[RMDB]
RNA sequence: GGGAACGACUCGAGUAGAGUCGAAAAAAAACAUGCCCAGGUAGCCCAGACCUUCAAGGCUACGGUGCGUUGCGACGCACGGUCUGAUUCUUCACAACGACGUUCACCGCGUCUUCUUCCAUCCCCCUCCAGCGCACGAAGUUCGCUUCGUGCGCAAGAUAUCAAUAUUGUUCGCAAUAUUGAUAUCAAAAGAAACAACAACAACAAC
Reactivity to 2A3 in 0.01 (KOAc 150mM, MgCl2 10mM, bicine 150mM(pH8.5), 24C), signal-to-noise 1, nucleotides 027 to 156: a000a000a000a000c080a090u090g000c000c000c000a010g000g040u000a000g020c000c050c120a020g000a020c000c000u000u010c010a000a000g010g000c000u000a010c000g030g000u000g010c000g010u010u050g050c140g140a010c000g010c000a000c000g000g020u010c000u000g030a060u080u130c060u120u160c060a080c030a220a090c090g040a010c020g090u220u190c050a030c070c070g020c010g020u000c020u070u000c010u090u030c050c060a160u100c000c000c000c000c000u050c000c010a010g000c000g000c000a000c000g000a000a020g030u080u060c060g050c080u000u010c010g000u000g000c000g000c000a000a000
Reactivity to DMS in 0.01 (KOAc 150mM, MgCl2 10mM, bicine 150mM(pH8.5), 24C), signal-to-noise 1, nucleotides 027 to 156: a040a050a020a060c080a070u000g000c040c030c010a020g030g000u000a060g020c020c000c090a120g010a110c030c030u000u000c080a050a190g010g000c000u020a030c040g000g010u000g000c030g030u000u010g020c100g020a110c000g000c040a050c030g000g000u010c050u000g000a180u000u000c060u020u000c050a110c030a080a070c000g000a050c030g040u000u000c040a040c090c040g010c040g030u000c030u000u000c020u000u010c030c030a150u020c000c000c010c010c020u010c050c030a170g020c020g010c010a010c020g000a020a020g020u000u000c300g030c030u000u000c000g030u000g000c030g000c000a000a000

Structure probing data (2A3 and DMS) for a 207-nucleotide construct. For DMS, 2,776 sequencing reads were counted. For DMS the reverse transcriptase was MarathonRT. The RNA was probed in 150 mM KOAc, 10 mM MgCl2 and 150 mM bicine (pH 8.5) at 24 C.